An RNA of 177 nucleotides, treated with DMS and 2A3 and read out base by base. Conditions: 150 mM KOAc, 10 mM MgCl2 and 150 mM bicine (pH 8.5), 24 C. For DMS, 2,374 sequencing reads were counted. Source: RMDB library TTRDES, as collected in RNAgym.
[RMDB]
RNA sequence: GGGAACGACUCGAGUAGAGUCGAAAAGAUAUGGAGCACGAAAGGCUUGGACCUCGUUAUUCGGAAACGAAUACGAGCUAGCCUAGUGCUCCUAAGUCAAACUCCCAGUACUUCGGUACUGGGAGAACUAGCAGAUUACGUUCGCGUAAUCUGCUAGAAAAGAAACAACAACAACAAC
Reactivity to DMS in 0.01 (KOAc 150mM, MgCl2 10mM, bicine 150mM(pH8.5), 24C), signal-to-noise 3, nucleotides 027 to 126: g020a030u000a120u010g010g010a020g000c000a000c020g010a130a200a070g020g020c000u000u020g030g010a050c300c000u000c000g000u000u020a020u010u000c010g020g000a010a050a040c000g020a020a000u000a030c000g000a010g000c030u000a000g000c000c010u000a300g000u000g020c000u000c000c000u000a000a040g000u010c010a110a140a240c010u010c000c000c000a020g000u020a000c000u000u020c280g030g020u000a010c000u000g000g000g000a000g000a010a050
Reactivity to 2A3 in 0.01 (KOAc 150mM, MgCl2 10mM, bicine 150mM(pH8.5), 24C), signal-to-noise 2, nucleotides 027 to 126: g000a000u030a000u100g000g010a010g000c000a010c050g170a300a210a000g060g000c080u300u300g110g070a090c020c000u000c010g050u140u200a040u060u000c010g010g000a030a000a020c000g000a000a000u020a020c010g010a000g000c010u030a030g000c000c010u000a000g000u010g000c010u000c000c000u000a010a000g000u000c010a030a050a150c010u000c000c020c000a000g000u000a000c030u010u160c300g140g000u010a000c000u000g000g030g010a000g000a000a000